[RMDB]
RNA sequence: GGGAACGACUCGAGUAGAGUCGAAAAUGCAGCGAUGAAGAGGAUGUUGUAUGCCUUCCCUUUCCGGAUUUUUCACUCACUUCAUCGGUGAAAAGUACCUCUUUAUGAAGGAUGCUGUUUAUCAGCGCACCCCUGAUACUUUCGAGUAUCAGGGGUGAAAAGAAACAACAACAACAAC
Reactivity to 2A3 in 0.01 (KOAc 150mM, MgCl2 10mM, bicine 150mM(pH8.5), 24C), signal-to-noise 2, nucleotides 027 to 126: u120g000c010a020g040c000g040a000u040g000a010a020g040a050g280g090a130u120g100u170u050g050u060a050u080g070c000c000u030u020c000c020c000u010u070u010c100c080g020g010a040u070u000u000u030u010c000a010c020u010c010a090c050u080u030c030a050u020c050g030g000u000g000a010a010a010a000g000u060a300c000c000u040c000u060u150u090a240u260g120a110a040g030g030a040u060g020c000u010g080u150u240u100a230u280c010a000g000c000g000
Reactivity to DMS in 0.01 (KOAc 150mM, MgCl2 10mM, bicine 150mM(pH8.5), 24C), signal-to-noise 4, nucleotides 027 to 126: u010g000c030a040g000c030g020a030u000g010a030a000g010a210g020g010a140u010g020u000u000g010u010a040u000g000c070c150u000u000c020c000c010u000u000u020c090c070g010g000a040u000u000u010u010u000c000a020c010u010c140a120c060u000u000c050a030u000c050g000g000u000g000a020a000a020a000g010u000a140c020c030u000c050u000u000u010a110u030g010a090a060g010g010a160u010g020c010u000g010u000u010u010a120u020c010a010g010c040g000
Structure probing data (2A3 and DMS) for a 177-nucleotide construct. The RNA was probed in 150 mM KOAc, 10 mM MgCl2 and 150 mM bicine (pH 8.5) at 24 C. For 2A3 the reverse transcriptase was SuperScript II with manganese. Source: RMDB library OK2TST, as collected in RNAgym. The DMS profile rests on 4,981 reads.